[RMDB]
RNA sequence: GGGAACGACUCGAGUAGAGUCGAAAAGGUCAUCGUGCUUUGCAUGCCGAGCUGAAACGGGAUCGACGAGUGGUCGAUCGGAGCCCCCAACGGUCUGGUAAUGCUUUGCACCCGCGCGAUCCCCGGCUCAACAAGCUCCAUUCGUGGAGCUUGUUGAAAAAGAAACAACAACAACAAC
Reactivity to 2A3 in 0.01 (KOAc 150mM, MgCl2 10mM, bicine 150mM(pH8.5), 24C), signal-to-noise 4, nucleotides 027 to 126: g050g020u080c050a100u150c130g010u050g010c020u090u060u050g010c000a010u040g030c000c030g040a040g000c040u040g030a130a100a040c060g080g040g000a020u000c000g030a020c020g040a100g210u220g070g060u100c030g020a000u010c000g000g030a030g070c000c000c010c010c000a020a060c020g010g030u020c030u130g020g020u150a290a050u070g020c000u020u000u040g030c020a020c030c030c010g110c030g000c030g030a020u030c010c020c000c010g010g010c030
Reactivity to DMS in 0.01 (KOAc 150mM, MgCl2 10mM, bicine 150mM(pH8.5), 24C), signal-to-noise 2, nucleotides 027 to 126: g000g010u010c030a000u040c170g040u030g030c000u010u000u010g030c080a060u020g040c110c020g020a090g030c050u000g030a080a040a060c200g010g000g040a060u000c020g010a060c000g010a160g010u020g000g000u000c020g020a040u020c000g000g000a130g030c040c050c030c020c000a070a270c090g030g010u000c050u010g020g010u000a030a060u030g010c040u010u000u000g010c020a010c010c080c100g000c050g020c040g010a040u020c020c020c060c050g000g000c010
Structure probing data (2A3 and DMS) for a 177-nucleotide construct. The RNA was probed in 150 mM KOAc, 10 mM MgCl2 and 150 mM bicine (pH 8.5) at 24 C. Values cover nucleotides 27 to 126. For DMS the reverse transcriptase was MarathonRT. 2A3 adducts were read by reverse transcription with SuperScript II with manganese. The DMS profile rests on 2,377 reads. 2A3 is a SHAPE reagent: it acylates the 2'-hydroxyl of flexible nucleotides of all four kinds.